[RMDB]
RNA sequence: GGGAACGACUCGAGUAGAGUCGAAAAGCUGCGUGAAACCUCGCUGUUUUCUUGGCUAACUUUCAGCGAGGCGAGGCAAGGCGGCAAAAAAAAGUUGGGAGCAGCAACGGCAAGCAAAAAAAAAGUUACAAGUUGCGAUGGUUCGCCAUCGCAACAACGCGAUAUGUAACUUCGGUUACAUAUCGCGAAAAGAAACAACAACAACAAC
Reactivity to 2A3 in 0.01 (KOAc 150mM, MgCl2 10mM, bicine 150mM(pH8.5), 24C), signal-to-noise 2, nucleotides 027 to 156: g020c000u040g000c010g080u110g060a110a040a040c000c010u000c000g000c000u000g030u000u000u010u030c060u100u220g100g000c080u040a000a030c030u020u020u010c010a000g000c000g000a010g030g000c000g000a000g000g070c060a050a040g050g000c080g010g010c070a090a080a000a000a000a000a020a050g100u090u040g030g010g000a040g000c010a010g010c010a060a020c020g040g010c030a030a040g020c070a070a170a010a000a000a000a000a010a000g000u000u000a020c020a050a090g010u000u000g010c000g010a000u010g000g040u020u070c070g030c070c000a010u010c020g000c000a000a000c000a000a000
Description:
Structure probing data (2A3) for a 207-nucleotide construct. Values cover nucleotides 27 to 156. For 2A3, 1,763 sequencing reads were counted. Source: RMDB library M2RFPK, as collected in RNAgym.